[RMDB]
RNA sequence: GGGAACGACUCGAGUAGAGUCGAAAAGCUCUGGAAUUGAGGCCCCUCUAACAAUAAUCCGAAACUACUUCGCAGAGUAAUCUGCCGAAUCGUAGGAUGCCCAUUACUAUCUAUUUUUGGAGCAUCUAAAACUGUCAGUGCUUCGGCACUGACAGAAGGUAACUGGUACGUUCGCGUACCAGUUACCAAAAGAAACAACAACAACAAC
Reactivity to 2A3 in 0.01 (KOAc 150mM, MgCl2 10mM, bicine 150mM(pH8.5), 24C), signal-to-noise 1, nucleotides 027 to 156: g030c010u000c000u010g000g110a300a080u120u190g050a080g010g020c000c030c000c000u080c070u100a120a090c090a040a020u210a030a020u040c030c030g020a130a040a000c010u000a010c000u020u020c000g020c000a050g000a020g030u070a040a130u000c000u000g070c100c010g050a000a010u130c170g000u000a040g090g000a000u020g000c000c000c000a060u000u030a050c010u140a220u270c050u030a230u130u020u000u020u000g000g020a150g000c010a000u030c000u090a030a030a050a100c000u000g000u020c000a000g020u010g000c010u000u100c160g090g000c000a000c000u000g000a010c000a000g000a000a000